Chemical mapping of a 177-nucleotide RNA with DMS and 2A3.
RNA sequence: GGGAACGACUCGAGUAGAGUCGAAAAGAGAAGAAAGAGAGCGAAUGUGUCCGGAGGGAACCCCCAAGCUUUCAACAGAGGAAGAGAGCAAGAUAGAGGAGCCCCCGUGACGCUGGCAGCAUCGCGGCGUACAUUACUACUUCGGUAGUAAUGUACGAAAAGAAACAACAACAACAAC
Reactivity to DMS in 0.01 (KOAc 150mM, MgCl2 10mM, bicine 150mM(pH8.5), 24C), signal-to-noise 3, nucleotides 027 to 126: g000a100g020a090a080g010a040a060a070g010a100g010a070g000c010g000a080a060u010g010u000g030u010c020c010g000g000a120g020g010g000a030a050c010c020c020c000c040a070a290g000c010u000u000u000c020a060a200c090a130g010a090g030g000a070a280g000a030g000a040g030c000a080a070g030a140u010a080g000a070g020g010a160g000c020c010c010c010c000g010u010g000a010c010g010c050u000g000g000c100a060g020c110a050u000c040g020c060g020g020
Reactivity to 2A3 in 0.01 (KOAc 150mM, MgCl2 10mM, bicine 150mM(pH8.5), 24C), signal-to-noise 2, nucleotides 027 to 126: g060a000g020a080a040g070a030a120a000g080a010g010a000g020c020g020a120a090u050g010u010g010u000c000c000g000g020a120g060g000g020a040a060c040c020c020c010c020a020a020g000c000u020u010u010c020a060a070c040a080g220a070g230g020a130a070g000a030g010a000g000c020a000a050g040a060u200a030g100a110g060g000a010g020c010c000c000c010c010g030u080g000a000c010g000c000u000g040g000c020a010g040c000a030u040c010g000c000g050g000

Conditions: 150 mM KOAc, 10 mM MgCl2 and 150 mM bicine (pH 8.5), 24 C. The DMS profile rests on 2,293 reads. Reactivities are given for positions 27 through 126. For 2A3, 2,774 sequencing reads were counted. Source: RMDB library 15KREP, as collected in RNAgym.